The record gives the reactivity of an RNA of 177 nucleotides to DMS and 2A3.
For DMS the reverse transcriptase was MarathonRT.
RNA sequence: GGGAACGACUCGAGUAGAGUCGAAAACAAAUAGGCCAUCACUGCCGUGUCAUCACCCUGGUCGGUGUAGGUAUCUUCAUACACGGUGAAAUCUGCAGCGAUAAGAUAGAUCUCUUCCAUGGGCUGGCACACGUAAGUGAUUCGUCACUUACGUGUGAAAAGAAACAACAACAACAAC
Reactivity to DMS in 0.01 (KOAc 150mM, MgCl2 10mM, bicine 150mM(pH8.5), 24C), signal-to-noise 6, nucleotides 027 to 126: c080a070a100a100u010a100g010g000c020c040a070u000c060a060c070u000g010c030c040g010u000g010u010c100a100u000c060a070c030c030c050u010g010g000u000c070g020g000u000g020u000a030g010g010u000a070u010c120u010u000c060a090u000a070c110a060c120g010g010u000g000a030a080a060u010c030u000g000c020a020g010c040g000a070u000a060a060g000a070u000a080g010a080u000c080u000c020u000u010c040c050a090u000g000g000g020c060u000g010g010
Reactivity to 2A3 in 0.01 (KOAc 150mM, MgCl2 10mM, bicine 150mM(pH8.5), 24C), signal-to-noise 6, nucleotides 027 to 126: c020a000a080a060u170a080g020g000c020c020a060u050c020a030c070u050g010c010c030g020u020g020u030c050a090u030c010a040c010c000c020u040g070g020u080c050g020g070u010g010u010a030g020g030u090a080u060c040u090u040c050a040u060a160c030a020c100g060g000u040g020a070a050a020u030c020u030g020c010a030g040c020g050a040u040a110a020g030a020u070a070g120a090u030c020u000c000u100u000c040c020a070u090g010g050g010c020u020g050g000